[RMDB]
RNA sequence: GGGAACGACUCGAGUAGAGUCGAAAAACUGGGCGAGAAUGUGACUUAAUCUAAGCUAUUGGUCUGGUGGCUGGGAGAGGAGGGCAGGCCAGCUCCUGUGGGAGGCCCGCGUGGCCGUGAAGGCAGACUGUGUCUACAGGUUCGCCUGUAGACACAGAAAAGAAACAACAACAACAAC
Reactivity to 2A3 in 0.01 (KOAc 150mM, MgCl2 10mM, bicine 150mM(pH8.5), 24C), signal-to-noise 1, nucleotides 027 to 126: a000c050u030g000g040g030c050g020a100g070a150a100u120g020u020g060a060c070u150u100a040a080u080c070u050a130a010g040c010u020a040u100u060g020g020u030c040u040g010g010u080g030g020c050u030g050g000g020a120g000a010g080g040a050g000g000g000c000a050g070g000c010c000a010g000c040u050c000c000u040g000u080g050g030g000a020g040g000c000c100c000g000c080g070u220g040g000c000c000g000u050g090a100a030g020g050c030a010g050a060
Reactivity to DMS in 0.01 (KOAc 150mM, MgCl2 10mM, bicine 150mM(pH8.5), 24C), signal-to-noise 1, nucleotides 027 to 126: a090c090u000g030g010g000c040g000a120g010a060a100u000g020u010g000a090c050u000u000a120a110u000c050u010a130a090g030c080u010a080u000u000g000g010u000c030u000g010g000u000g000g010c080u000g000g000g000a060g000a120g000g000a100g010g000g020c080a040g020g010c060c010a080g000c050u000c020c030u010g010u010g000g020g020a120g010g010c010c020c030g010c180g000u010g000g010c020c030g000u010g010a120a080g020g000c070a150g000a180